[RMDB]
RNA sequence: GGGAACGACUCGAGUAGAGUCGAAAAUGGCUUAGGAAUUGCACCUGAAUUGCAAGAAGAGGUUAGGCAGACUCCUGGGAGCACAGCAGGUUGGAAGAACAGAAGUAUCAGGACCUGGUGUGGGUGCACUACAUCCAGGAUUCGUCCUGGAUGUAGUAAAAGAAACAACAACAACAAC
Reactivity to 2A3 in 0.01 (KOAc 150mM, MgCl2 10mM, bicine 150mM(pH8.5), 24C), signal-to-noise 4, nucleotides 027 to 126: u080g040g000c010u050u050a030g040g040a130a090u110u070g020c020a030c020c010u070g080a160a100u140u070g010c040a040a030g030a070a020g030a100g080g000u100u080a040g090g000c020a000g030a100c010u000c020c010u040g070g020g020a050g060c030a010c020a040g120c010a020g000g050u040u070g070g140a150a100g010a060a010c040a040g200a300a040g080u080a090u170c030a020g090g080a030c000c010u030g010g030u030g050u010g030g050g000u080g000c040
Reactivity to DMS in 0.01 (KOAc 150mM, MgCl2 10mM, bicine 150mM(pH8.5), 24C), signal-to-noise 6, nucleotides 027 to 126: u010g010g000c030u000u000a060g010g010a090a130u010u000g000c030a040c050c040u000g010a100a120u000u010g010c050a060a080g000a100a110g000a070g000g000u000u000a070g020g010c050a090g000a090c070u000c020c020u000g000g000g000a100g020c050a050c050a040g000c030a020g000g010u000u000g010g020a080a100g000a060a100c070a110g010a070a100g010u010a080u010c050a120g000g000a050c040c010u000g000g020u000g030u000g000g000g020u000g000c120